[RMDB]
RNA sequence: GGGAACGACUCGAGUAGAGUCGAAAAGUCUAGCGAACGGAUCCCACCCGGGAGACACGCAAGUCGCGAAUUAAGCCGACCGGCCAAGGUCAAUUGCAGAACUCAACUGCAUGAGUAAGCUAGACGACGUAUCGUCCAUGUUCGCAUGGACGAUACGAAAAGAAACAACAACAACAAC
Reactivity to DMS in 0.01 (KOAc 150mM, MgCl2 10mM, bicine 150mM(pH8.5), 24C), signal-to-noise 3, nucleotides 027 to 126: g000u000c000u000a000g000c000g020a300a040c050g000g020a040u000c000c000c000a140c300c040c070g030g000g000a170g000a000c020a150c040g000c010a080a160g030u000c230g000c000g010a190a110u000u000a140a070g020c020c040g010a140c000c070g000g000c050c030a140a200g000g000u000c010a020a060u020u000g010c000a000g010a060a150c130u000c290a070a110c000u000g000c000a010u000g000a180g010u000a050a290g000c000u000a000g010a040c020g050a140
Reactivity to 2A3 in 0.01 (KOAc 150mM, MgCl2 10mM, bicine 150mM(pH8.5), 24C), signal-to-noise 2, nucleotides 027 to 126: g000u000c010u000a000g000c000g010a000a030c000g030g020a020u000c030c000c000a020c010c010c010g050g030g000a040g020a020c030a020c020g000c030a080a150g220u220c070g020c030g000a090a200u280u080a210a000g040c020c010g010a020c000c010g000g000c000c020a020a010g030g000u000c000a020a090u060u000g000c000a000g030a190a140c050u020c280a050a150c020u010g010c010a010u010g010a020g010u010a020a010g000c000u000a000g000a000c000g020a000